RNA sequence: GGGAACGACUCGAGUAGAGUCGAAAAAGCCGUCGGUAACGAAUAUCCUGGCGGUAGUAGCAGCAUAGUCGGGUGAGAAUCCCGACCGCCGGAAGGGCAAGGGUUCCACGGCAAUGUUCGUCAGCCGUCACAAUCAUCGGUUCGCCGAUGAUUGUGAAAAAGAAACAACAACAACAAC
Reactivity to 2A3 in 0.01 (KOAc 150mM, MgCl2 10mM, bicine 150mM(pH8.5), 24C), signal-to-noise 4, nucleotides 027 to 126: a020g040c020c000g020u040c090g020g030u070a050a010c030g050a170a030u090a050u170c020c010u040g070g000c020g010g000u010a040g010u030a000g020c190a000g000c030a110u090a160g020u010c000g000g000g000u020g020a070g010a020a010u020c000c000c000g000a000c000c000g000c000c000g080g080a080a050g070g000g000c050a040a120g110g010g000u080u000c010c020a010c010g010g000c030a020a070u050g000u010u000c060g060u030c000a010g060c020c010g000
Reactivity to DMS in 0.01 (KOAc 150mM, MgCl2 10mM, bicine 150mM(pH8.5), 24C), signal-to-noise 3, nucleotides 027 to 126: a150g000c000c000g020u000c060g010g000u060a040a010c080g040a130a060u010a300u020c060c000u020g020g010c020g020g010u040a020g010u030a140g010c150a090g000c080a080u030a080g030u020c000g020g020g010u010g000a160g000a300a120u000c000c010c000g010a000c000c130g000c010c020g010g000a110a060g000g000g000c110a100a150g020g000g010u000u020c090c020a090c000g010g000c000a070a070u010g010u000u020c090g010u000c050a090g020c030c060g030
Chemical mapping of a 177-nucleotide RNA with 2A3 and DMS.
The RNA was probed in 150 mM KOAc, 10 mM MgCl2 and 150 mM bicine (pH 8.5) at 24 C.
DMS adducts were read by reverse transcription with MarathonRT.
2A3 adducts were read by reverse transcription with SuperScript II with manganese.